[RMDB]
RNA sequence: GGGAACGACUCGAGUAGAGUCGAAAAUUGAAGAAACUACCUCUGUCUGUAUUAUCAUAAUCCAUCAUCUUCUCCUUUCAUCUUUGGUUUGCUGACUUGAAUUGUAGGCUUACUUGCUUCGUUACCAUCAUCAUCUUCCGAUGGUAGACCAUAUACCCCUUUAUACUCACUUCGGUGAGUAUAAAGGAAAAGAAACAACAACAACAAC
Reactivity to DMS in 0.01 (KOAc 150mM, MgCl2 10mM, bicine 150mM(pH8.5), 24C), signal-to-noise 4, nucleotides 027 to 156: u000u000g000a130a130g000a140a110a100c040u000a110c040c010u000c030u010g020u010c030u000g000u000a080u010u010a100u000c060a090u010a080a100u000c040c020a100u000c050a070u000c020u000u000c030u000c020c030u000u000u000c050a080u000c040u010u010u000g040g010u000u000u000g010c030u010g010a130c050u000u000g000a060a080u000u000g010u000a090g010g010c020u010u000a040c030u000u000g000c030u000u000c040g020u000u000a010c000c000a060u000c030a130u000c070a120u000c110u000u010c080c090g030a030u010g020g010u000a020g010a070c050c050a090u000a140u000a180c110c060
Reactivity to 2A3 in 0.01 (KOAc 150mM, MgCl2 10mM, bicine 150mM(pH8.5), 24C), signal-to-noise 9, nucleotides 027 to 156: u050u040g030a040a010g050a040a100a010c040u070a060c030c020u030c030u030g060u040c020u040g090u080a120u100u100a090u200c080a080u110a200a060u060c040c030a040u050c010a040u020c070u110u020c020u070c020c000u030u080u100c060a150u050c080u050u080u040g030g000u050u070u070g030c040u020g030a080c020u050u080g060a090a050u080u030g030u050a020g010g000c000u000u010a020c010u020u030g020c010u030u050c020g040u030u010a020c020c000a010u030c000a010u010c000a020u020c060u190u050c080c080g010a010u010g000g010u010a040g030a030c020c040a020u120a040u120a230c030c050
The record gives the reactivity of an RNA of 207 nucleotides to DMS and 2A3. The RNA was probed in 150 mM KOAc, 10 mM MgCl2 and 150 mM bicine (pH 8.5) at 24 C.